[RMDB]
RNA sequence: GGGAACGACUCGAGUAGAGUCGAAAACCCUGAUUCGUCAGGGGAAGAUCCUAAGUCCCUCCGUGCAAUUGUCAGUACGAUAAGAGUCGGAAACGACUCUUUUGACGUACUUGGAUUUAUUGCGGAGGGAUAUGGAGUGGCGAGGUUUCGACCUCAAACUUGGUAAGAACUUCGGUUCUUACCAAGUAAAAGAAACAACAACAACAAC
Reactivity to 2A3 in 0.01 (KOAc 150mM, MgCl2 10mM, bicine 150mM(pH8.5), 24C), signal-to-noise 3, nucleotides 027 to 156: c000c000c000u010g000a030u000u140c270g040u020c100a000g040g000g010g020a020a030g080a100u030c020c000u050a140a040g100u020c010c000c010u000c000c030g100u160g080c020a030a040u020u020g040u020c000a000g000u000a000c000g010a010u010a050a020g010a000g020u000c010g020g090a010a060a060c010g000a000c000u010c020u030u020u000u020g050a040c010g000u000a010c000u010u090g060g030a020u100u200u170a060u060u080g000c000g000g010a010g000g080g010a000u000a000u020g010g000a030g030u100g040g100c090g020a010g030g000u050u200u180c220g100a070c020c000u030c010a060a040
Reactivity to DMS in 0.01 (KOAc 150mM, MgCl2 10mM, bicine 150mM(pH8.5), 24C), signal-to-noise 2, nucleotides 027 to 156: c000c000c000u000g010a040u010u020c300g030u000c010a000g000g050g010g020a040a100g010a130u000c000c020u010a070a220g000u000c000c000c000u000c020c000g070u020g030c090a080a040u000u000g020u000c010a050g000u010a000c000g020a120u010a040a040g000a020g040u010c010g030g010a140a100a220c000g020a010c000u010c000u000u000u010u010g020a300c120g010u000a000c000u000u000g020g000a040u000u000u000a020u000u000g010c000g000g000a030g020g020g020a000u010a020u000g020g000a110g010u000g040g010c040g000a030g000g030u000u000u010c160g010a010c000c020u010c000a030a070